[RMDB]
RNA sequence: GGGAACGACUCGAGUAGAGUCGAAAACUCUUGUUAGGUGAAAGUUGAUGGUCGCCGUGUCAGUCCAUGCCUUUGAAAACAGUUAUAUGUAGUAGGGAGUCGAGAACCUAUGAGAGUUAGAACUUGCUAUGCCUUGGACUCUUCGGAGUCCAAGGAAACAGUACAAUACCUUCGGGUAUUGUACUGUAAAAGAAACAACAACAACAAC
Reactivity to DMS in 0.01 (KOAc 150mM, MgCl2 10mM, bicine 150mM(pH8.5), 24C), signal-to-noise 4, nucleotides 027 to 156: c010u000c020u000u000g010u000u000a040g040g050u000g000a090a080a120g020u000u010g030a110u010g020g020u010c020g020c030c030g000u000g010u000c030a130g010u010c020c040a080u000g000c040c000u000u000u000g000a090a110a070a090c050a080g010u000u000a140u000a090u000g030u000a150g030u000a080g000g010g010a090g030u000c050g010a160g020a090a040c020c010u000a040u000g000a100g010a080g020u000u000a070g000a070a150c060u000u000g010c020u000a120u010g000c000c000u010u000g010g010a030c000u000c010u000u000c290g050g010a030g030u000c000c000a010a010g010g000a020a010
Reactivity to 2A3 in 0.01 (KOAc 150mM, MgCl2 10mM, bicine 150mM(pH8.5), 24C), signal-to-noise 3, nucleotides 027 to 156: c010u010c010u020u040g130u110u090a040g050g030u050g080a120a060a060g050u110u120g040a080u070g020g030u040c020g050c070c010g050u010g070u090c040a010g010u000c020c010a020u080g060c010c020u100u070u190g100a090a010a020a020c020a030g030u140u070a160u040a050u200g060u070a060g020u020a030g000g020g030a010g020u040c020g010a010g020a160a040c000c020u010a040u060g030a020g000a010g010u020u030a020g020a040a030c030u040u090g020c050u090a040u200g020c000c000u000u000g000g000a000c010u000c010u000u030c180g060g000a000g010u000c000c000a000a000g000g030a000a000